This 177-nucleotide RNA was probed chemically with 2A3. 2A3 adducts were read by reverse transcription with SuperScript II with manganese. It was measured as part of the RMDB library M2PK50. Values cover nucleotides 27 to 126.
RNA sequence: GGGAACGACUCGAGUAGAGUCGAAAACAACGCGUGUUCGCACGCGUUGAAAGUAAGCACGAAAAUAAAAUAAGGGAAAAGGGAACGUGCACCCACCCAUAAAAACGAGCCCGUUCGCGGGCUCGAACGAUGUUGAUACGUUCGCGUAUCAACAUCGAAAAGAAACAACAACAACAAC
Reactivity to 2A3 in 0.01 (KOAc 150mM, MgCl2 10mM, bicine 150mM(pH8.5), 24C), signal-to-noise 1, nucleotides 027 to 126: c000a000a000c000g000c000g000u020g010u050u090c210g000c040a010c000g040c000g000u030u020g000a000a000a000g110u090a030a070g000c020a000c040g160a300a140a100a040u270a050a120a040a020u250a130a250g010g000g040a040a110a090a130g030g020g000a050a030c040g000u000g020c000a050c030c000c000a030c000c020c000a030u160a060a160a010a010a030c010g000a010g000c010c000c000g000u000u010c230g000c000g050g020g000c000u000c000g030a000a000